[RMDB]
RNA sequence: GGGAACGACUCGAGUAGAGUCGAAAAGAAAGGCAGCGAGUGCAGCCCACGCAGAGGCAUGCUUUUGCAUGCCCAGUCGAGCCCACGACUUAGGGCAGCUGCGACACUGAGGGCAGCUGCCGAAAGACGUCCAGCUAGUAUUCGUACUAGCUGGACGAAAAGAAACAACAACAACAAC
Reactivity to DMS in 0.01 (KOAc 150mM, MgCl2 10mM, bicine 150mM(pH8.5), 24C), signal-to-noise 2, nucleotides 027 to 126: g000a080a170a150g010g040c020a010g020c020g010a110g040u000g000c030a090g000c000c060c050a140c150g020c150a120g010a170g020g000c000a020u000g020c000u000u000u000u000g000c000a000u000g000c040c000c030a040g020u000c010g010a190g020c010c000c010a300c020g000a060c020u000u020a070g000g010g000c020a080g010c040u000g020c040g000a100c180a090c150u030g000a130g030g010g030c000a120g000c010u000g020c000c000g000a010a080a050g010a260
Reactivity to 2A3 in 0.01 (KOAc 150mM, MgCl2 10mM, bicine 150mM(pH8.5), 24C), signal-to-noise 1, nucleotides 027 to 126: g090a000a060a000g010g000c030a020g030c010g080a090g070u150g050c030a030g000c020c010c050a060c030g020c050a030g070a180g110g000c000a030u020g060c010u170u160u150u290g000c010a020u000g020c000c000c030a000g000u030c000g010a000g010c000c000c000a040c010g020a020c000u040u210a060g030g110g020c000a000g040c000u000g000c010g000a040c070a030c150u180g060a170g040g080g000c000a000g010c000u000g000c000c010g000a000a000a020g050a030
Structure probing data (DMS and 2A3) for a 177-nucleotide construct. For DMS, 1,048 sequencing reads were counted. Conditions: 150 mM KOAc, 10 mM MgCl2 and 150 mM bicine (pH 8.5), 24 C. For 2A3 the reverse transcriptase was SuperScript II with manganese.